The data come from the RNA Mapping Database (RMDB), library OK3TST. This 207-nucleotide RNA was probed chemically with 2A3. For 2A3 the reverse transcriptase was SuperScript II with manganese. Conditions: 150 mM KOAc, 10 mM MgCl2 and 150 mM bicine (pH 8.5), 24 C.
RNA sequence: GGGAACGACUCGAGUAGAGUCGAAAAAUUAACUGGGGAAGAUGGAGGACUUGUCAUCCCUCAAGAUAUUCAAACGCAAAUCAAUGAAUUAGCUCGUUCAUUUGAUGCGCUUGAGCAAUAUGUAACUGUUGAACCAGUGCGUACACGUUCAGGAUCAAGCUCGCGUAAUAUUCGUAUUACGCGAGCUAAAAGAAACAACAACAACAAC
Reactivity to 2A3 in 0.01 (KOAc 150mM, MgCl2 10mM, bicine 150mM(pH8.5), 24C), signal-to-noise 1, nucleotides 027 to 156: a000u060u020a070a030c070u010g000g020g000g000a040a090g040a050u040g060g010a040g010g070a020c050u030u090g030u010c030a020u030c000c050c040u000c010a050a010g050a070u100a080u120u150c080a000a000a110c000g000c010a030a090a160u010c000a000a000u010g010a000a000u070u000a030g080c030u020c020g000u010u000c000a000u000u000u250g020a020u020g010c050g000c020u070u060g000a000g000c060a090a070u080a040u190g030u010a070a140c000u010g090u100u060g010a010a010c040c000a000g000u000g050c020g000u090a050c100a010c190g070u150u050c030a030g000g010a060u080c050a180